About this RNA:
An RNA of 177 nucleotides, treated with DMS and 2A3 and read out base by base. Conditions: 150 mM KOAc, 10 mM MgCl2 and 150 mM bicine (pH 8.5), 24 C. High DMS reactivity at an A or C suggests that its Watson-Crick edge is free. Values cover nucleotides 27 to 126. Source: RMDB library M2PK50, as collected in RNAgym. For DMS the reverse transcriptase was MarathonRT. For 2A3, 2,234 sequencing reads were counted.
[RMDB]
RNA sequence: GGGAACGACUCGAGUAGAGUCGAAAAGCACUGGCGUUCGCGCCAGUGCAAAGAACGCGACGGCCUCCGAAAUAAAACGGUGAAGAACGCGACAAGCCGUAAAAACGUCGAACUUCGGUUCGACGAACUCCGUAUACCUGUUCGCAGGUAUACGGAGAAAAGAAACAACAACAACAAC
Reactivity to DMS in 0.01 (KOAc 150mM, MgCl2 10mM, bicine 150mM(pH8.5), 24C), signal-to-noise 2, nucleotides 027 to 126: g000c000a010c010u000g080g000c000g130u000u010c170g050c080g010c000c000a020g060u000g000c000a010a040a080g020a100a170c040g100c030g040a020c110g030g050c060c000u000c020c000g000a040a090a110u000a080a100a120a050c010g000g010u010g000a140a120g030a060a070c030g000c020g000a080c170a120a180g020c010c040g010u000a060a020a130a130a080c000g000u000c000g000a020a000c010u010u020c130g090g020u000u000c010g020a000c000g000a010a070
Reactivity to 2A3 in 0.01 (KOAc 150mM, MgCl2 10mM, bicine 150mM(pH8.5), 24C), signal-to-noise 2, nucleotides 027 to 126: g000c020a000c000u000g010g010c010g030u070u080c290g040c000g010c120c010a020g000u000g010c000a020a010a000g000a060a020c030g000c050g070a030c010g040g010c010c000u010c000c010g080a050a120a020u300a020a110a050a020c030g000g010u040g020a020a050g060a190a040c040g030c010g040a040c040a050a010g000c000c000g030u030a090a010a080a000a000c000g020u000c000g010a000a000c000u010u040c190g070g000u000u000c000g000a000c000g000a010a000